Description
The data come from the RNA Mapping Database (RMDB), library M2PK50. The record gives the reactivity of an RNA of 177 nucleotides to 2A3 and DMS. The RNA was probed in 150 mM KOAc, 10 mM MgCl2 and 150 mM bicine (pH 8.5) at 24 C.
RNA sequence: GGGAACGACUCGAGUAGAGUCGAAAAUGUCCCAGUUUCGACUGGGACAAAAGCAUGAGCAGGAUCAAAGAUCAAAGCCGUCGCUCAUGCGUAAAGACGGCAAAAGGCUAGUGUUCGCACUAGCCAAGAUCUGUGCUUGAUUCGUCAAGCACAGAUCAAAAGAAACAACAACAACAAC
Reactivity to 2A3 in 0.01 (KOAc 150mM, MgCl2 10mM, bicine 150mM(pH8.5), 24C), signal-to-noise 2, nucleotides 027 to 126: u050g010u000c000c000c000a020g000u040u050u080c230g100a050c020u010g000g000g020a000c000a020a020a000a020g020c000a000u000g010a010g000c030a040g160g220a100u210c150a150a060a030g050a040u120c060a080a150a050g020c000c000g010u020c010g020c010u010c010a000u020g000c000g010u000a000a000a000g020a010c010g050g000c030a030a030a000a100g010g010c010u000a000g010u020g030u020u060c220g000c070a000c000u000a000g020c000c000a000a000
Reactivity to DMS in 0.01 (KOAc 150mM, MgCl2 10mM, bicine 150mM(pH8.5), 24C), signal-to-noise 2, nucleotides 027 to 126: u000g030u000c000c010c000a000g000u000u000u000c130g020a010c000u000g000g000g010a020c000a000a000a040a090g000c010a000u000g000a010g030c000a300g010g000a060u010c200a040a090a070g000a100u020c090a070a050a110g010c000c000g000u000c030g000c000u000c000a030u000g010c020g030u020a020a100a100g000a020c000g000g000c020a090a070a110a100g000g000c000u000a000g010u000g000u000u010c170g000c000a010c000u000a000g000c000c010a020a060